[RMDB]
The record gives the reactivity of an RNA of 177 nucleotides to 2A3 and DMS. Conditions: 150 mM KOAc, 10 mM MgCl2 and 150 mM bicine (pH 8.5), 24 C. For DMS the reverse transcriptase was MarathonRT. For 2A3, 2,568 sequencing reads were counted. The DMS profile rests on 6,114 reads.
RNA sequence: GGGAACGACUCGAGUAGAGUCGAAAAAAAGAGGGCGUGGACUUGGGAUAAAUUUGCACUGCCAGCAAAAAGGGAAAUUCUGUUAGCAAUUCUUCUCAUCUAUUAAGACAGACUGCAGUUAGGAUAAUAGUCUUAUUUGAUUCGUCAAAUAAGACUAAAAAGAAACAACAACAACAAC
Reactivity to 2A3 in 0.01 (KOAc 150mM, MgCl2 10mM, bicine 150mM(pH8.5), 24C), signal-to-noise 2, nucleotides 027 to 126: a000a010a030g070a030g020g020g020c070g040u060g020g020a050c020u050u080g020g010g000a010u070a100a160a030u090u060u030g010c000a020c060u090g010c010c030a000g010c000a010a040a020a020a010g070g010g040a020a080a030u090u030c020u020g070u130u050a050g030c010a060a110u090u010c000u080u020c050u010c020a080u000c050u090a130u100u130a080a000g030a030c020a050g020a030c010u020g000c010a040g010u050u060a040g050g020a020u040a160a070
Reactivity to DMS in 0.01 (KOAc 150mM, MgCl2 10mM, bicine 150mM(pH8.5), 24C), signal-to-noise 5, nucleotides 027 to 126: a050a060a080g000a110g010g010g010c100g030u000g010g010a080c090u010u000g010g000g010a100u010a040a050a120u000u000u000g000c030a090c090u000g020c080c070a080g000c070a020a020a030a070a080g010g000g010a080a060a050u000u000c040u000g000u000u000a090g020c060a040a040u000u000c070u000u000c030u000c040a070u000c050u010a080u000u010a070a080g000a060c100a030g010a080c140u000g020c040a040g000u010u000a050g010g000a060u000a040a150
It was measured as part of the RMDB library OK2TRN.